[RMDB]
RNA sequence: GGGAACGACUCGAGUAGAGUCGAAAAGGUGAUUGUGAUACUCGCUACUCUCAUUCAUCGAAUGAGAGUAUUAGACUGCUACAAUCACAUUACGUGACUCAAUUAUUUAGCAGUCUAAUUGAUAACAUAACGCGAGAUAUGUUAAAGUCACGUAUCGCCUCAGCCCCUCAUUCGUGAGGGGCUGAGGAAAAGAAACAACAACAACAAC
Reactivity to 2A3 in 0.01 (KOAc 150mM, MgCl2 10mM, bicine 150mM(pH8.5), 24C), signal-to-noise 1, nucleotides 027 to 156: g080g000u030g000a030u000u000g000u000g020a010u030a110c010u000c000g000c020u050a030c000u030c000u010c000a000u020u000c020a100u140c280g000a000a000u000g000a000g000a000g020u000a000u000u000a000g000a000c000u000g010c000u000a000c000a010a010u000c000a000c000a010u080u130a000c000g000u030g010a000c010u090c160a090a300u190u180a110u200u150u090a010g010c000a020g000u000c000u000a000a000u030u010g020a010u040a080a000c020a060u140a080a010c040g000c000g000a000g050a050u020a000u000g100u060u110a120a170a000g050u000c000a000c000g000u010a010u030c010g000